An RNA of 177 nucleotides, treated with DMS and 2A3 and read out base by base.
The reactions ran in a buffer of 150 mM KOAc, 10 mM MgCl2 and 150 mM bicine (pH 8.5), at 24 C.
For DMS, 1,053 sequencing reads were counted.
DMS (dimethyl sulfate) methylates the pairing face of unpaired adenines and cytosines.
It was measured as part of the RMDB library OK2TRN.
[RMDB]
RNA sequence: GGGAACGACUCGAGUAGAGUCGAAAAAUAUUUACAAUAUUGAAGGGCAGAAUUGGCACCUUCCCGUUUAUCAUAUGCACAAUUUAGCCCAAGAUAAUUACACCUGGUGGAAAGCACGUCUCCGCUAACUCGAGUUUUAAUUCGUUAAAACUCGAGUAAAAGAAACAACAACAACAAC
Reactivity to DMS in 0.01 (KOAc 150mM, MgCl2 10mM, bicine 150mM(pH8.5), 24C), signal-to-noise 2, nucleotides 027 to 126: a050u000a020u010u010u010a090c090a090a090u000a010u000u010g000a220a140g000g020g050c020a300g020a040a040u010u000g010g000c000a090c190c050u010u000c000c010c000g030u000u010u000a040u010c150a060u000a070u010g020c000a090c060a030a090u000u000u000a090g010c000c020c030a040a210g000a060u010a030a050u010u010a060c090a070c020c030u020g030g000u000g010g000a040a070a080g010c030a060c080g000u010c060u000c010c000g010c110u000a090
Reactivity to 2A3 in 0.01 (KOAc 150mM, MgCl2 10mM, bicine 150mM(pH8.5), 24C), signal-to-noise 2, nucleotides 027 to 126: a000u100a050u040u110u100a100c040a100a100u060a040u130u090g060a180a120g030g000g000c050a060g030a150a030u040u060g000g000c050a060c050c010u030u050c020c000c000g060u090u150u060a110u080c040a070u110a040u290g000c020a000c000a290a000u010u040u010a000g000c000c020c020a000a020g040a040u130a100a110u110u140a060c080a010c070c040u030g010g010u060g070g010a100a030a060g050c020a040c040g040u000c040u000c030c000g000c030u000a030